[RMDB]
This 177-nucleotide RNA was probed chemically with DMS. It was measured as part of the RMDB library OK2TST. DMS adducts were read by reverse transcription with MarathonRT.
RNA sequence: GGGAACGACUCGAGUAGAGUCGAAAAUUUGAAUAUUUCUUCGUUUUUAACGCGUUCUAAAUCUUGUGCAGUCGUUGUCGCUUCAAUUGCUUUAACACCAGAAACUUUAGCUGCAUUAAUACGUUCAAUAGGAGCAUUCAUUCGUGAAUGCUCCUAUAAAAGAAACAACAACAACAAC
Reactivity to DMS in 0.01 (KOAc 150mM, MgCl2 10mM, bicine 150mM(pH8.5), 24C), signal-to-noise 1, nucleotides 027 to 126: u000u000u000g010a180a090u000a110u010u010u010c040u000u010c000g020u000u000u000u000u000a010a070c190g000c080g020u010u010c020u010a050a050a010u010c020u010u020g010u000g050c090a070g020u000c110g000u000u000g010u000c300g000c120u010u000c020a030a060u000u010g000c010u020u000u000a030a050c090a020c090c030a070g020a130a050a060c160u000u000u000a060g040c150u000g010c020a050u000u000a000a050u000a030c070g030u000u000c080a080